[RMDB]
RNA sequence: GGGAACGACUCGAGUAGAGUCGAAAAUCACGUUCUCGAACGAGUGAGAGUUCUCGUUCGAGAUCGAGUGAACGUGAACGAACGUUCUCUCACGUGUUCACUCACUCGAUCACGUACACGUUCACGUGAGUGUGUGAACGAGAGAACACACUCGAACCUACAAAAUAACCUUCGGGUUAUUUUGUAGAAAAGAAACAACAACAACAAC
Reactivity to DMS in 0.01 (KOAc 150mM, MgCl2 10mM, bicine 150mM(pH8.5), 24C), signal-to-noise 3, nucleotides 027 to 156: u000c030a140c040g010u010u010c010u000c000g010a030a070c010g000a030g020u010g000a180g000a220g020u000u000c010u000c000g020u010u000c030g000a020g020a000u000c020g010a070g030u000g000a040a040c090g000u000g010a070a120c050g010a150a110c110g000u000u000c040u000c060u010c020a140c120g060u010g020u000u000c010a050c020u000c000a050c020u000c040g000a100u000c070a090c040g040u000a130c070a080c050g030u000u000c010a040c030g020u020g000a100g010u010g010u000g010u010g020a040a040c010g000a080g000a030g000a110a050c010a260c010a050c030u000c050g010a110a190c210
Reactivity to 2A3 in 0.01 (KOAc 150mM, MgCl2 10mM, bicine 150mM(pH8.5), 24C), signal-to-noise 9, nucleotides 027 to 156: u120c020a010c080g020u030u010c010u010c020g030a050a030c010g000a000g010u060g040a120g010a020g080u080u040c010u010c020g010u020u030c010g000a020g010a010u010c000g000a020g050u100g020a050a040c070g020u020g030a080a040c100g060a110a020c060g040u070u010c080u020c020u020c050a050c140g150u170g010u020u000c010a000c010u010c000a000c000u030c020g110a140u130c060a010c030g010u030a020c050a010c030g020u020u020c020a010c030g040u070g060a060g030u090g000u020g000u000g020a010a000c030g000a000g000a000g000a040a010c050a000c000a000c060u000c010g020a040a040c010

About this RNA:
Chemical mapping of a 207-nucleotide RNA with DMS and 2A3. For DMS, 6,770 sequencing reads were counted. It was measured as part of the RMDB library OK3TST. Values cover nucleotides 27 to 156. 2A3 adducts were read by reverse transcription with SuperScript II with manganese.